[RMDB]
RNA sequence: GGGAACGACUCGAGUAGAGUCGAAAAGCUGCUAACACACAUCUUAAGCAUGGCGGUGGUAUCGCUGGUGCUAUUAAUGCGGCUUCAAAAGGGGCUGUCCAAAAAGAGUCAGAUGAGUAUAUUCUGGAAGGCCAUAUCUUCGGAUAUGGCAAAAGAAACAACAACAACAAC
Reactivity to 2A3 in 0.01 (KOAc 150mM, MgCl2 10mM, bicine 150mM(pH8.5), 24C), signal-to-noise 9, nucleotides 027 to 129: g000c010u030g000c000u090a150a010c030a000c030a000c000a190u090c070u100u160a060a020g010c020a010u020g020g000c040g020g030u120g090g200u160a070u150c000g000c040u100g100g020u000g000c020u020a050u110u160a070a040u110g000c000g000g000c000u050u040c060a080a110a030a040g050g010g000g000c030u060g050u090c010c040a050a060a000a020a040g090a010g040u040c030a010g020a080u070g020a040g070u110a120u050a040u220u040c020u030g040g030a070a020g140
Reactivity to DMS in 0.01 (KOAc 150mM, MgCl2 10mM, bicine 150mM(pH8.5), 24C), signal-to-noise 6, nucleotides 027 to 129: g030c030u030g020c020u040a090a100c140a140c160a000c120a100u030c100u030u030a070a040g040c000a000u020g060g040c040g010g000u030g010g060u070a070u040c000g030c020u000g020g040u050g000c000u030a050u050u020a030a020u040g000c000g000g040c050u000u000c030a050a070a090a110g000g000g000g000c030u000g030u070c050c070a050a010a070a100a080g040a110g030u030c060a000g020a080u020g030a100g010u000a050u040a050u020u000c010u000g020g030a120a060g020
Annotation:
Conditions: 150 mM KOAc, 10 mM MgCl2 and 150 mM bicine (pH 8.5), 24 C. Structure probing data (2A3 and DMS) for a 170-nucleotide construct. Source: RMDB library 15KLIB, as collected in RNAgym. 2A3 adducts were read by reverse transcription with SuperScript II with manganese. For 2A3, 20,015 sequencing reads were counted.